[RMDB]
RNA sequence: GGGAACGACUCGAGUAGAGUCGAAAAGUGAGCCUUGCAUUGCACUUGGACAAUUCUUCUCAAGCACACUCUUUCACCUGGCCAUUCAUGGUCAGAACAAGGCAAAACACUGAAGUAUUCUGUGCUUUUCCGGGGUAAUUUCGCACAAGUUGCGAUGACUUUCUACGCAAUUCGUUGCGUAGAAAGUAAAAGAAACAACAACAACAAC
Reactivity to DMS in 0.01 (KOAc 150mM, MgCl2 10mM, bicine 150mM(pH8.5), 24C), signal-to-noise 3, nucleotides 027 to 156: g000u000g000a130g010c050c030u000u000g010c060a160u010u000g020c030a050c050u010u010g050g010a130c090a050a140u010u000c060u010u000c010u000c040a080a080g010c030a070c050a090c090u000c040u000u010u000c050a100c130c000u010g000g010c000c000a060u010u010c130a090u000g000g000u000c000a030g000a060a070c070a040a050g010g000c040a060a070a050a080c040a050c040u000g010a070a170g010u000a080u010u000c030u010g030u000g000c020u000u000u010u000c020c010g000g010g010g020u000a020a100u000u000u000c020g020c030a060c040a060a210g020u000u020g010c000g010a070u000g010
Reactivity to 2A3 in 0.01 (KOAc 150mM, MgCl2 10mM, bicine 150mM(pH8.5), 24C), signal-to-noise 5, nucleotides 027 to 156: g050u040g020a040g010c000c010u020u030g060c060a070u020u110g020c030a030c050u050u050g020g040a050c040a080a160u090u020c050u080u020c080u030c050a020a020g020c020a010c010a030c060u080c010u030u200u090c040a050c060c000u000g010g000c000c000a060u140u140c090a110u260g000g000u010c000a000g000a010a030c050a030a000g060g000c000a030a030a040a030c060a010c040u060g030a050a000g040u050a060u150u070c040u050g000u010g000c000u010u040u040u030c040c020g030g000g010g010u070a060a120u030u100u100c020g010c020a020c030a080a050g080u170u030g010c000g000a010u020g010